[RMDB]
RNA sequence: GGGAACGACUCGAGUAGAGUCGAAAAGCGUAGCUUACGCCUACUUUGGAUGUGAGGAAGGUACUAUGUACUUUGUGCCUAGAGCUAAGUCUGUUGUCUCAAGGAUUGGAGACUCCAUCUUUACAGGGUCCAUAGUACUCUUCGGAGUACUAUGGACAAAAGAAACAACAACAACAAC
Reactivity to 2A3 in 0.01 (KOAc 150mM, MgCl2 10mM, bicine 150mM(pH8.5), 24C), signal-to-noise 1, nucleotides 027 to 126: g000c010g080u070a040g060c030u030u010a040c010g040c000c000u010a040c000u050u080u190g060g000a040u070g060u080g050a040g010g040a120a010g000g030u000a000c020u040a010u120g070u070a020c030u100u030u040g020u070g010c010c020u070a110g000a000g040c080u060a030a030g070u080c070u010g240u030u090g050u050c010u000c020a060a060g130g000a110u070u180g040g000a010g030a020c010u000c020c000a010u010c000u000u090u010a070c020a000g140g030
Reactivity to DMS in 0.01 (KOAc 150mM, MgCl2 10mM, bicine 150mM(pH8.5), 24C), signal-to-noise 2, nucleotides 027 to 126: g010c050g000u000a070g010c120u000u000a080c160g010c000c020u000a060c090u010u000u010g010g020a060u010g010u010g000a060g000g000a090a030g000g000u010a000c010u010a090u020g020u000a020c040u000u020u000g020u000g010c030c030u000a090g000a120g020c110u010a070a090g040u000c040u000g000u010u010g000u020c010u010c030a100a120g010g020a080u000u000g020g010a140g000a100c040u000c020c030a080u000c010u010u000u000a100c090a080g000g020

This 177-nucleotide RNA was probed chemically with 2A3 and DMS.
For 2A3, 687 sequencing reads were counted.
2A3 adducts were read by reverse transcription with SuperScript II with manganese.
For DMS the reverse transcriptase was MarathonRT.
It was measured as part of the RMDB library 15KREP.
The RNA was probed in 150 mM KOAc, 10 mM MgCl2 and 150 mM bicine (pH 8.5) at 24 C.
For DMS, 1,355 sequencing reads were counted.